Structure probing data (DMS and 2A3) for a 207-nucleotide construct.
For DMS, 2,932 sequencing reads were counted.
The reactions ran in a buffer of 150 mM KOAc, 10 mM MgCl2 and 150 mM bicine (pH 8.5), at 24 C.
For 2A3 the reverse transcriptase was SuperScript II with manganese.
[RMDB]
RNA sequence: GGGAACGACUCGAGUAGAGUCGAAAAACUCUCACCAGUUAAGGUACUGUAACUGCUUCCCUAGGAGUAGUGUCAUCGUGUUAUGACACGAGAGGCUCAUUACACGAUGAGCCAGUACUCCUGGAGUACAGUACCGUACUCCAGAGGGCGUGAGAGACGUAGCUUCCAUGUUCGCAUGGAAGCUACGAAAAGAAACAACAACAACAAC
Reactivity to DMS in 0.01 (KOAc 150mM, MgCl2 10mM, bicine 150mM(pH8.5), 24C), signal-to-noise 1, nucleotides 027 to 156: a100c020u000c000u000c020a080c070c020a070g000u000u000a050a040g000g020u000a010c020u000g020u000a060a050c020u000g010c060u000u000c020c030c010u000a080g050g000a060g040u010a080g000u000g040u000c030a020u000c110g020u020g040u010u000a030u000g020a020c010a090c010g000a170g010a100g010g040c050u000c000a010u000u000a070c160a120c180g010a050u000g000a020g000c090c020a080g020u000a030c000u000c020c000u000g020g010a000g000u000a100c030a020g000u000a020c000c020g010u000a000c010u000c010c120a180g010a120g040g020g000c050g030u000g010a090g000a070g010a120
Reactivity to 2A3 in 0.01 (KOAc 150mM, MgCl2 10mM, bicine 150mM(pH8.5), 24C), signal-to-noise 2, nucleotides 027 to 156: a000c000u000c000u010c000a000c000c000a040g020u080u130a060a110g030g010u000a020c030u020g080u070a150a140c040u020g060c030u090u080c040c070c020u040a000g000g000a000g000u030a020g060u000g030u050c010a000u010c050g040u000g070u240u150a030u040g020a000c000a000c090g090a070g010a090g070g000c020u010c010a000u000u040a060c070a000c100g000a000u000g000a010g050c040c000a000g000u000a000c000u000c000c000u000g040g000a020g000u020a010c000a020g030u010a010c020c010g010u000a000c000u020c050c000a170g100a170g290g040g000c070g010u000g000a000g000a000g000a000